[RMDB]
RNA sequence: GGGAACGACUCGAGUAGAGUCGAAAAAAAAGAUAUGGACCUACGGGAGCACUACACGACGAAGAACAAAUUCGGAAACGAAUUUGGGAGUCGAGUAGUGCGAAGAACGUAGGUCCUAAGUCAAAAACACCUCUUUAUCCUUCGGGAUAAAGAGGUGAAAAGAAACAACAACAACAAC
Reactivity to DMS in 0.01 (KOAc 150mM, MgCl2 10mM, bicine 150mM(pH8.5), 24C), signal-to-noise 1, nucleotides 027 to 126: a140a000a090a160g000a050u010a300u000g000g010a000c000c000u020a020c010g000g000g040a100g000c000a010c020u020a000c000a210c000g030a000c000g000a140a210g000a160a150c010a030a000a060u000u000c000g000g000a070a080a260c000g010a020a000u000u000u000g000g000g000a120g000u000c020g010a030g030u000a000g000u010g000c000g000a030a100g060a070a190c010g020u000a000g000g000u000c000c000u000a000a090g000u000c030a090a090a130a040a160